[RMDB]
RNA sequence: GGGAACGACUCGAGUAGAGUCGAAAAGUAUUGACACCAAAGGUGUCGGUCCAGGUGUACAUAUCAAAUUUGUUCAAGUGGACACGAUCGUCGAGAUGCGCAACACUCGCCAUUAAUAAACACCCACAUUAUUUUCCUUGUAGAAUUUGGUCUGGACGUCUACCGCUUUCUUCGGAAAGCGGUAGACAAAAGAAACAACAACAACAAC
Reactivity to 2A3 in 0.01 (KOAc 150mM, MgCl2 10mM, bicine 150mM(pH8.5), 24C), signal-to-noise 1, nucleotides 027 to 156: g050u050a040u180u170g000a020c010a010c050c000a300a000a020g040g000u020g020u020c000g000g000u000c010c000a010g010g030u040g050u020a050c050a040u020a010u170c070a060a050a120u110u030u040g100u100u010c050a130a050g070u030g000g050a010c050a040c200g040a100u130c170g020u000c020g000a020g000a100u030g030c080g020c170a070a130c030a050c100u000c020g040c030c000a050u060u210a110a090u050a020a100a000c020a070c060c110c000a000c000a020u090u080a200u020u200u100u090c010c000u030u030g000u070a130g020a160a000u040u000u070g030g030u020c000u000g030g020a040c090
An RNA of 207 nucleotides, treated with 2A3 and read out base by base. The reactions ran in a buffer of 150 mM KOAc, 10 mM MgCl2 and 150 mM bicine (pH 8.5), at 24 C. For 2A3 the reverse transcriptase was SuperScript II with manganese. Source: RMDB library OK3TST, as collected in RNAgym.